[RMDB]
RNA sequence: GGGAACGACUCGAGUAGAGUCGAAAACGCAACCCCCACUGGCUGGGGCUUGGCCAUAGGCCAUCAGCGCAUGCGUGGAACCUUUGUGGCUCCUCUGCCGAUCCAUACUGCGGAACUCCUAGCCGCUCGGAUCGUAACAGUUCGCUGUUACGAUCCGAAAAGAAACAACAACAACAAC
Reactivity to DMS in 0.01 (KOAc 150mM, MgCl2 10mM, bicine 150mM(pH8.5), 24C), signal-to-noise 1, nucleotides 027 to 126: c230g000c140a150a260c110c000c000c070c000a190c000u030g000g020c040u010g000g000g030g190c300u000u000g000g000c090c000a030u000a040g090g060c000c000a000u040c000a090g000c120g000c050a120u000g090c000g000u000g000g000a060a140c000c100u000u070u000g000u020g000g020c000u000c140c000u000c050u000g010c070c010g000a170u000c060c000a150u000a120c000u010g000c000g020g120a140a040c100u000c060c000u020a150g050c000c000g000c130u050
Reactivity to 2A3 in 0.01 (KOAc 150mM, MgCl2 10mM, bicine 150mM(pH8.5), 24C), signal-to-noise 3, nucleotides 027 to 126: c040g020c040a050a080c020c020c020c010c010a040c120u110g090g030c040u030g020g000g000g000c010u080u060g020g000c030c010a130u120a100g020g000c020c010a050u070c040a030g050c020g030c060a070u170g010c010g030u030g000g020a090a140c000c000u080u150u200g100u080g040g010c030u120c030c050u080c070u060g020c000c010g020a010u040c030c000a040u040a150c010u020g030c010g010g060a060a040c040u030c010c000u020a030g020c010c000g000c030u020